[RMDB]
RNA sequence: GGGAACGACUCGAGUAGAGUCGAAAAGGAGCCCUGCCUUGGAGAGGCUCCAGUACACAGGUGUUACUGAGCUGGAGGGCUUGAGAGAGGGGACCAUUCUGAGGAUGGGGGAUGGAGAAAGAAUGUUACCAAGGUGAACGGAAAGGUAGCAAAGACAUGGACUAUAUUACUUCGGUAAUAUAGUCCAAAAAGAAACAACAACAACAAC
Reactivity to 2A3 in 0.01 (KOAc 150mM, MgCl2 10mM, bicine 150mM(pH8.5), 24C), signal-to-noise 2, nucleotides 027 to 156: g020g000a010g010c010c010c020u030g050c030c010u040u070g030g040a070g010a050g030g000c000u000c000c000a000g050u050a010c060a000c030a030g060g080u060g030u110u090a020c010u050g020a000g030c010u040g020g020a010g000g040g020c010u050u110g020a060g000a000g010a010g000g040g000g000a020c040c000a030u060u040c070u130g040a060g070g000a050u060g030g000g010g000g000a000u050g010g000a030g040a010a050a010g060a020a040u130g000u070u090a020c010c010a000a020g050g050u090g050a050a010c020g030g040a080a000a010g050g000u090a010g020c000a000a040a030g090a010c040a030
Reactivity to DMS in 0.01 (KOAc 150mM, MgCl2 10mM, bicine 150mM(pH8.5), 24C), signal-to-noise 1, nucleotides 027 to 156: g000g040a060g000c000c010c010u000g000c050c040u000u010g000g010a140g020a040g000g000c000u010c030c010a040g000u000a040c130a210c080a040g010g000u090g030u000u000a090c050u000g000a080g000c020u010g040g000a060g010g000g010c050u000u010g030a090g000a180g000a080g020g000g030g000a130c020c020a080u000u010c070u010g010a130g000g000a080u000g010g020g000g020g020a050u000g000g000a090g000a000a050a080g030a060a080u000g010u000u000a140c040c020a100a070g020g010u010g010a060a130c070g000g000a080a150a150g000g000u000a100g010c040a010a100a080g000a120c090a170